[RMDB]
RNA sequence: GGGAACGACUCGAGUAGAGUCGAAAAAAAAAGAUAUGGACUCGAACUACUUGGAAACAUUUCGUUGAAACUUAAUCGGAAACGAUUAAGUGGAGAAAUGGAGUACAAGCGAGUCCUAAGUCAAAAACGUUAUAUUAGUCUUCGGACUAAUAUAACGAAAAGAAACAACAACAACAAC
Reactivity to DMS in 0.01 (KOAc 150mM, MgCl2 10mM, bicine 150mM(pH8.5), 24C), signal-to-noise 2, nucleotides 027 to 126: a000a120a120a110a160g000a020u010a300u000g010g010a010c000u000c000g010a110a030c060u030a260c000u000u010g000g000a300a150a160c000a000u000u020u000c010g010u000u010g000a100a120a010c000u000u010a000a000u000c000g000g010a060a030a130c000g030a000u000u000a000a000g010u000g000g010a040g020a010a000a000u010g000g010a060g010u000a090c020a010a030g000c000g000a030g010u000c010c000u000a000a060g010u030c010a030a030a060a090a170
Reactivity to 2A3 in 0.01 (KOAc 150mM, MgCl2 10mM, bicine 150mM(pH8.5), 24C), signal-to-noise 1, nucleotides 027 to 126: a000a000a000a030a010g090a020u090a020u080g000g010a020c020u000c010g020a100a030c080u300a040c010u300u000g000g010a020a000a010c000a010u010u020u030c120g300u300u060g000a030a000a010c000u010u000a000a000u010c000g040g010a070a040a050c000g000a010u030u000a010a010g000u010g000g000a040g010a020a010a000u040g010g000a010g010u020a010c010a000a000g040c000g000a000g000u000c000c000u000a040a000g020u000c020a210a000a000a000a000